Structure probing data (2A3 and DMS) for a 207-nucleotide construct. It was measured as part of the RMDB library OK3TST. The reactions ran in a buffer of 150 mM KOAc, 10 mM MgCl2 and 150 mM bicine (pH 8.5), at 24 C. For 2A3, 1,190 sequencing reads were counted. 2A3 adducts were read by reverse transcription with SuperScript II with manganese.
RNA sequence: GGGAACGACUCGAGUAGAGUCGAAAAGAGCGGGACGGAGAAGACCAUCACCGCGGGAGACCAGAGCAAGCCGCGCCGCCUGUGCUACCUGUACAGCACCAAGUCCAGCGCGAAGCGGGCUGUCGAUCGGGAGUUGAACCGGCUGCAAGUGAGAGGCUACCACUGUAAGUUUCGACUUACAGUGGUAAAAAGAAACAACAACAACAAC
Reactivity to 2A3 in 0.01 (KOAc 150mM, MgCl2 10mM, bicine 150mM(pH8.5), 24C), signal-to-noise 2, nucleotides 027 to 156: g070a000g000c020g020g020g020a040c000g000g030a100g040a030a100g020a070c030c000a030u080c020a020c030c010g000c000g010g030g010a070g020a030c040c080a080g000a010g100c040a130a000g010c000c000g010c010g000c020c000g000c000c000u040g010u060g040c020u060a180c070c070u120g060u120a080c040a070g010c030a050c040c030a080a010g030u000c030c020a050g010c010g010c040g060a040a000g030c020g010g000g000c010u050g020u050c050g000a020u100c020g010g020g010a100g000u060u070g040a030a060c040c050g020g020c010u020g020c040a060a090g010u040g080a100g020a010g080g000c010
Reactivity to DMS in 0.01 (KOAc 150mM, MgCl2 10mM, bicine 150mM(pH8.5), 24C), signal-to-noise 2, nucleotides 027 to 156: g020a140g010c010g020g010g000a060c010g000g020a160g060a120a120g010a080c040c010a110u010c050a110c050c030g020c060g000g040g010a180g000a120c000c040a130g000a080g000c050a050a080g000c050c050g000c020g030c020c020g020c040c020u010g030u010g020c000u000a130c100c070u010g000u010a110c130a160g010c010a070c040c070a040a050g020u000c040c010a090g050c010g060c020g020a060a200g040c060g040g000g030c010u000g000u000c090g010a110u010c030g010g010g030a090g010u000u040g010a050a110c070c020g030g010c000u000g020c010a020a080g030u010g010a060g000a100g020g040c060